Background:
Chemical mapping of a 177-nucleotide RNA with 2A3 and DMS. For DMS, 1,125 sequencing reads were counted. Reactivities are rounded to 0.1 and cut off at 0 and 3. In probing experiments dimethyl sulfate is read out at A N1 and C N3, which are open when not base-paired.
RNA sequence: GGGAACGACUCGAGUAGAGUCGAAAAGAUAUGGACACCUCAGGAUAUAUUCUCCGUUGAAAUCGGAAACGAUGGAGGAGAUAUAGAAUUUGGUGUCCUAAGUCAAACCAACGGUUCGCCGUUGGAAGCCAUUUUAACUGUUCGCAGUUAAAAUGGCAAAAGAAACAACAACAACAAC
Reactivity to 2A3 in 0.01 (KOAc 150mM, MgCl2 10mM, bicine 150mM(pH8.5), 24C), signal-to-noise 2, nucleotides 027 to 126: g010a010u050a020u130g000g020a000c000a020c010c000u010c000a000g000g050a000u000a000u010a030u200u230c010u000c010c020g130u180u070g000a020a010a000u010c000g000g050a110a070a050c010g010a010u020g000g000a020g000g030a010g010a000u030a000u000a000g030a020a020u000u020u020g010g000u000g010u000c000c000u000a000a000g020u000c000a010a030a100c000c010a000a000c000g050g040u030u100c300g040c170c010g020u010u000g020g020a040a000
Reactivity to DMS in 0.01 (KOAc 150mM, MgCl2 10mM, bicine 150mM(pH8.5), 24C), signal-to-noise 2, nucleotides 027 to 126: g010a070u000a300u010g000g010a000c000a000c000c000u000c070a030g000g000a300u000a000u000a000u010u010c000u010c000c000g020u000u010g030a090a110a040u000c010g050g000a170a050a140c000g010a010u000g000g050a080g000g000a010g000a010u000a000u000a000g010a300a220u000u020u000g000g000u000g010u010c000c000u000a020a060g010u000c030a090a080a230c010c000a000a000c010g000g000u000u000c270g020c020c000g000u000u000g000g000a060a120